[RMDB]
RNA sequence: GGGAACGACUCGAGUAGAGUCGAAAAGGGGUCUUGCUCAGAGCAGCUUGGAUUUAAGCUGUGGAGCUGAAGCCUCCACGGCGUUGAAACAGCUUUGUCAGCUGCUCAGAAGAGCAAGACGGAGGCACCCAAACUCACGACCUUCGGGUCGUGAGAACGUUAAACCACGUUUCGACGUGGUUUAACGAAAAGAAACAACAACAACAAC
Reactivity to 2A3 in 0.01 (KOAc 150mM, MgCl2 10mM, bicine 150mM(pH8.5), 24C), signal-to-noise 1, nucleotides 027 to 156: g090g010g020g020u000c000u030u030g000c030u030c050a060g000a010g000c000a000g000c000u150u300g300g010a170u280u270u180a070a000g000c000u000g000u000g050g010a000g000c000u000g000a030a010g020c030c000u000c010c000a010c000g010g000c030g070u170u010g000a010a000a020c000a020g020c040u080u140u250g060u000c000a000g000c000u010g000c000u000c000a010g060a090a020g000a010g000c000a000a010g000a000c000g000g000a000g000g000c020a070c000c010c000a060a050a100c000u030c000a000c000g000a000c020c010u050u020c300g090g000g000u000c000g000u000g000a000g010a000a000

Chemical mapping of a 207-nucleotide RNA with 2A3.
The RNA was probed in 150 mM KOAc, 10 mM MgCl2 and 150 mM bicine (pH 8.5) at 24 C.
Source: RMDB library RNAMAK, as collected in RNAgym.
Reactivities are given for positions 27 through 156.